[RMDB]
RNA sequence: GGGAACGACUCGAGUAGAGUCGAAAACUAUCUCCACAGGAAGAUCAUAGAAGAAGUUGCAGGGGGAACAAACUUGCUAUCCAGAUUUAUGGCAGCAUUGAUAGAGACUAACUGGACUCUUGAUAACUACACACCUACAGUUCGCUGUAGGUGUGUAAAAAGAAACAACAACAACAAC
Reactivity to DMS in 0.01 (KOAc 150mM, MgCl2 10mM, bicine 150mM(pH8.5), 24C), signal-to-noise 3, nucleotides 027 to 126: c010u040a040u000c000u000c020c040a120c190a190g000g000a080a090g000a080u040c180a060u030a140g030a050a020g020a130a140g000u010u000g000c090a040g000g010g020g030g020a060a110c090a060a030a070c060u050u000g000c020u000a030u070c070c040a020g040a140u030u060u020a080u070g000g050c300a050g000c050a020u060u010g030a070u000a050g000a020g040a040c020u050a050a030c190u000g010g000a040c010u000c040u020u010g000a110u020a060a100c150
Reactivity to 2A3 in 0.01 (KOAc 150mM, MgCl2 10mM, bicine 150mM(pH8.5), 24C), signal-to-noise 2, nucleotides 027 to 126: c000u000a040u020c010u070c040c040a110c010a140g100g010a050a070g000a030u070c030a000u100a070g060a150a010g040a110a010g090u070u070g030c050a140g050g000g020g080g000a010a010c020a040a220a010c030u020u090g060c020u090a080u110c060c020a040g040a180u020u090u130a130u050g060g000c000a000g000c090a050u030u140g080a010u060a060g040a000g000a030c010u010a090a010c030u100g000g010a020c000u000c000u000u000g080a020u030a090a020c020

Chemical mapping of a 177-nucleotide RNA with DMS and 2A3. The 2A3 profile rests on 877 reads. The reactions ran in a buffer of 150 mM KOAc, 10 mM MgCl2 and 150 mM bicine (pH 8.5), at 24 C.